[RMDB]
RNA sequence: GGGAACGACUCGAGUAGAGUCGAAAACAACAGACACGCGAGCACAAAGGUACACGCAUACGCCUCCCAAGUCGUGAUGCUCGCUGGGCUGCUGCGUGGCACUCGCGCAGCGAUGGCGCUGCAGCGGACGACUCCGAGUAUUCGUACUCGGAGUCGUAAAAGAAACAACAACAACAAC
Reactivity to 2A3 in 0.01 (KOAc 150mM, MgCl2 10mM, bicine 150mM(pH8.5), 24C), signal-to-noise 5, nucleotides 027 to 126: c010a010a000c020a030g170a020c010a000c150g030c030g050a020g000c030a010c030a080a070a030g100g040u180a040c050a010c070g000c010a030u110a170c040g020c000c010u080c010c040c020a040a040g080u110c040g040u090g070a100u080g020c010u000c010g000c020u020g010g070g010c040u020g000c010u000g010c010g000u040g070g030c020a030c100u130c000g000c000g000c030a040g000c000g020a070u120g070g080c040g010c010u040g010c000a030g010c000g020g040
Reactivity to DMS in 0.01 (KOAc 150mM, MgCl2 10mM, bicine 150mM(pH8.5), 24C), signal-to-noise 2, nucleotides 027 to 126: c100a130a120c170a110g010a070c110a070c130g000c030g000a080g000c020a130c140a030a080a150g000g000u020a050c090a020c070g000c050a080u030a020c020g040c040c000u010c040c000c010a110a090g040u020c050g000u040g010a150u010g000c000u000c030g000c010u020g000g000g050c030u080g010c030u000g000c030g000u000g030g000c100a040c020u000c000g000c020g030c060a060g020c000g000a020u020g000g010c010g030c050u010g000c020a000g050c020g050g000
Chemical mapping of a 177-nucleotide RNA with 2A3 and DMS. The reactions ran in a buffer of 150 mM KOAc, 10 mM MgCl2 and 150 mM bicine (pH 8.5), at 24 C. It was measured as part of the RMDB library OK1LIB. Values are in units of 0.01, from 0 to 300, in steps of 10.